[RMDB]
RNA sequence: GGGAACGACUCGAGUAGAGUCGAAAACUGUGUAGUCACUACUGUAGAAAGUGCAGAGGCCUAGGGGCCAGAGCAAAGACCUCGGUCCCACUACAGCUGGGGACACCUCAGUAAAGUUAGGUUUCUGGUCAGCUUCAUGACAAGUGUUUAAAAGUAAUCCUACUAGUGAUUUCGAUCACUAGUAGGAAAAAGAAACAACAACAACAAC
Reactivity to 2A3 in 0.01 (KOAc 150mM, MgCl2 10mM, bicine 150mM(pH8.5), 24C), signal-to-noise 1, nucleotides 027 to 156: c010u020g040u060g110u190a070g030u040c010a020c040u100a000c010u070g030u030a030g150a130a070a000g080u090g050c040a020g000a010g000g060c000c030u070a060g000g000g010g000c070c090a070g000a020g000c040a230a140a020g030a030c010c000u000c010g000g030u000c000c000c000a010c000u040a030c020a010g000c000u000g030g000g020g120a130c050a200c080c000u000c000a010g000u080a040a200a080g010u030u010a000g020g030u000u030u000c010u000g000g060u090c000a010g030c010u050u080c000a030u100g070a060c020a070a100g070u010g030u080u070u160a070a100a070a000g040u230a010a070
Reactivity to DMS in 0.01 (KOAc 150mM, MgCl2 10mM, bicine 150mM(pH8.5), 24C), signal-to-noise 2, nucleotides 027 to 156: c010u000g030u020g000u010a150g060u000c030a050c060u000a070c040u050g020u000a080g010a040a070a110g050u020g080c030a130g020a070g030g040c050c030u010a090g010g040g010g040c030c010a030g010a100g020c020a130a090a230g000a090c140c000u000c040g050g010u020c010c000c000a180c030u000a060c070a150g020c030u010g000g010g030g000a080c120a090c040c050u010c010a020g010u000a040a070a130g010u010u010a040g030g010u010u000u010c030u030g010g060u020c020a100g010c050u000u010c040a140u000g000a150c010a060a170g020u000g030u020u010u010a030a060a040a130g030u000a070a160